[RMDB]
This 177-nucleotide RNA was probed chemically with DMS and 2A3. The RNA was probed in 150 mM KOAc, 10 mM MgCl2 and 150 mM bicine (pH 8.5) at 24 C. Values are in units of 0.01, from 0 to 300, in steps of 10. For 2A3 the reverse transcriptase was SuperScript II with manganese. It was measured as part of the RMDB library M2PK50.
RNA sequence: GGGAACGACUCGAGUAGAGUCGAAAACUUGCAAACUUCGGUUUGCAAGAAAGAACGCUGCGGCGAGCAGCAGCCAGAGAAGGCAACACAAUCGCCUUAAAAAAAUCUAUGAGUUCGCUCAUAGAAACAUGUAUUUUGUGUUCGCACAAAAUACAUGAAAAGAAACAACAACAACAAC
Reactivity to DMS in 0.01 (KOAc 150mM, MgCl2 10mM, bicine 150mM(pH8.5), 24C), signal-to-noise 2, nucleotides 027 to 126: c000u010u010g000c000a000a010a010c000u010u020c160g030g000u000u000u000g000c000a000a000g000a040a090a140g000a160a100c140g020c000u000g010c030g020g010c070g020a120g000c020a010g010c000a120g010c010c050a130g010a200g020a100a050g010g000c010a110a070c130a060c180a110a100u000c090g000c000c010u000u030a020a000a090a090a040a050a070u000c000u010a010u000g010a000g010u000u020c180g060c000u000c010a000u000a010g000a030a090a100
Reactivity to 2A3 in 0.01 (KOAc 150mM, MgCl2 10mM, bicine 150mM(pH8.5), 24C), signal-to-noise 2, nucleotides 027 to 126: c000u010u000g000c000a000a000a000c010u040u050c110g100g000u010u000u000g000c010a010a000g000a000a010a010g020a060a010c040g000c010u000g020c050g050g010c100g040a040g050c000a010g000c010a000g020c010c010a040g020a020g030a300a050g040g000c030a110a010c060a000c030a090a110u060c050g010c020c040u110u110a050a170a010a010a000a010a080u020c000u000a010u020g000a000g010u010u090c160g030c040u000c000a010u000a030g060a030a030a000